[RMDB]
The record gives the reactivity of an RNA of 177 nucleotides to 2A3 and DMS.
Source: RMDB library OK1LIB, as collected in RNAgym.
The 2A3 profile rests on 13,107 reads.
RNA sequence: GGGAACGACUCGAGUAGAGUCGAAAAACAUGCUACCAUGGACCGUACAGAGGGCAGCGAGACCGUGAGAUAGAGCGAAUCCCUUCAAGCUGGUCCCAGUUCGGCUCGCCGUAUGCAACUCGACGGCAGUUAAUAUGAAAUUCGUUUCAUAUUAACUAAAAGAAACAACAACAACAAC
Reactivity to 2A3 in 0.01 (KOAc 150mM, MgCl2 10mM, bicine 150mM(pH8.5), 24C), signal-to-noise 8, nucleotides 027 to 126: a000c040a030u140g020c030u070a050c040c000a050u060g060g010a050c000c010g020u100a030c040a050g060a060g010g010g010c010a000g020c010g010a010g030a070c020c020g030u070g030a070g010a040u120a020g080a010g020c040g040a070a130u170c010c020c000u050u170c170a140a030g000c020u070g020g030u040c000c000c010a080g020u080u070c010g020g010c010u010c020g000c010c010g050u080a070u130g030c010a020a060c010u020c030g020a010c010g010g010c000
Reactivity to DMS in 0.01 (KOAc 150mM, MgCl2 10mM, bicine 150mM(pH8.5), 24C), signal-to-noise 3, nucleotides 027 to 126: a060c110a040u030g010c110u020a100c070c040a050u010g010g010a170c020c030g000u010a070c140a110g000a050g000g010g010c050a120g000c010g000a040g000a110c020c010g010u000g010a050g010a040u010a020g010a060g020c020g000a300a270u000c000c000c000u000u000c300a160a300g000c000u000g000g000u000c000c000c010a280g000u030u020c020g000g010c010u010c020g000c000c220g000u030a030u030g010c050a060a050c030u000c020g000a010c030g000g000c140